[RMDB]
RNA sequence: GGGAACGACUCGAGUAGAGUCGAAAAAAAGAUAUGGAUGUUGAACGUAGCACGAGCUAAGACAGUCGAUUCGGAAACGAAUCGAUCGAGCUCGUGAACUACUAUUAGUAAACAUCCUAAGUCAAAAGUUAUGAUCUAUGUUCGCAUAGAUCAUAACAAAAGAAACAACAACAACAAC
Reactivity to DMS in 0.01 (KOAc 150mM, MgCl2 10mM, bicine 150mM(pH8.5), 24C), signal-to-noise 7, nucleotides 027 to 126: a080a090a090g000a020u000a030u020g000g000a010u000g010u010u000g000a190a200c180g000u000a000g000c000a000c010g010a010g010c000u010a220a100g010a050c300a070g000u000c000g000a020u000u000c010g010g000a010a010a010c000g000a010a000u000c000g000a010u000c000g010a010g020c000u000c010g010u000g000a010a020c030u010a300c020u000a010u000u000a080g000u000a060a010a010c000a000u000c000c000u000a000a070g000u000c000a060a050a060a140